[RMDB]
Record summary:
Chemical mapping of a 177-nucleotide RNA with 2A3 and DMS. The RNA was probed in 150 mM KOAc, 10 mM MgCl2 and 150 mM bicine (pH 8.5) at 24 C. For DMS, 988 sequencing reads were counted. Values are in units of 0.01, from 0 to 300, in steps of 10.
RNA sequence: GGGAACGACUCGAGUAGAGUCGAAAAAUCGUAUGACUGGAUGACGCAGGGCCCGUCUCAUAUAAUGGUUCGUGGUUAUACUAUUGCAGAUGUUGAUACAACACAAUGUACAGUAGGUUCAAACUACGCGUAUGUUCUCGUUCGCGAGAACAUACGCAAAAGAAACAACAACAACAAC
Reactivity to 2A3 in 0.01 (KOAc 150mM, MgCl2 10mM, bicine 150mM(pH8.5), 24C), signal-to-noise 1, nucleotides 027 to 126: a000u020c000g030u000a020u030g110a020c000u010g000g090a060u020g080a020c000g050c030a060g050g120g050c040c070c000g050u060c020u010c040a130u210a030u070a140a110u190g130g000u060u030c000g050u060g110g000u050u030a110u010a060c010u020a040u050u080g000c000a020g050a260u110g060u170u020g050a080u000a200c010a030a010c010a030c010a050a080u070g000u050a010c030a000g000u000a020g000g000u090u160c090a110a040a040c000u080a040c010
Reactivity to DMS in 0.01 (KOAc 150mM, MgCl2 10mM, bicine 150mM(pH8.5), 24C), signal-to-noise 1, nucleotides 027 to 126: a070u000c080g040u000a070u000g000a080c060u000g000g000a060u010g000a080c090g000c040a090g000g010g030c040c030c030g000u000c040u000c020a050u010a120u000a050a100u000g000g010u000u000c080g020u000g010g020u010u000a090u010a060c070u000a040u000u000g000c080a010g000a080u000g000u000u000g000a180u030a130c100a050a010c030a040c120a100a100u000g010u000a050c070a030g000u000a000g020g020u000u030c200a060a020a050c050u000a020c090